[RMDB]
RNA sequence: GGGAACGACUCGAGUAGAGUCGAAAAGAAAGAAAGAGGUGUGAUUAGGGAGUGUAAAUAAUUUCUGAGUAAUGUUUAAAAUAGCCAUAAACAGUUCCCUAGAGAGUAUCCACACACCUGCAUUAAAUCUGUAAGAGUACUUCGGUACUCUUACAGAAAAAGAAACAACAACAACAAC
Reactivity to 2A3 in 0.01 (KOAc 150mM, MgCl2 10mM, bicine 150mM(pH8.5), 24C), signal-to-noise 3, nucleotides 027 to 126: g040a010a000a000g060a010a050a020g180a010g000g000u020g000u030g070a300u160u170a110g000g010g080a040g050u120g030u120a090a070a000u200a090a040u150u010u000c020u030g000a000g030u030a050a080u060g000u000u050u050a100a200a150a100u200a050g070c040c010a020u040a040a030a000c010a010g070u030u000c000c030c000u000a000g040a000g000a020g070u130a100u110c040c000a000c000a000c000a010c020c000u000g010c010a030u090u260a120a030a120
Reactivity to DMS in 0.01 (KOAc 150mM, MgCl2 10mM, bicine 150mM(pH8.5), 24C), signal-to-noise 4, nucleotides 027 to 126: g000a070a060a030g000a090a070a100g010a030g000g020u010g010u010g000a130u010u020a050g000g000g020a040g000u010g020u020a050a070a100u020a050a070u010u010u000c020u000g010a100g000u010a060a080u010g000u010u000u000a030a030a040a110u040a080g020c140c120a090u010a030a030a010c010a060g000u010u000c000c000c000u010a050g020a100g020a130g010u020a070u010c050c030a150c000a010c000a010c000c000u000g000c190a060u020u020a060a070a110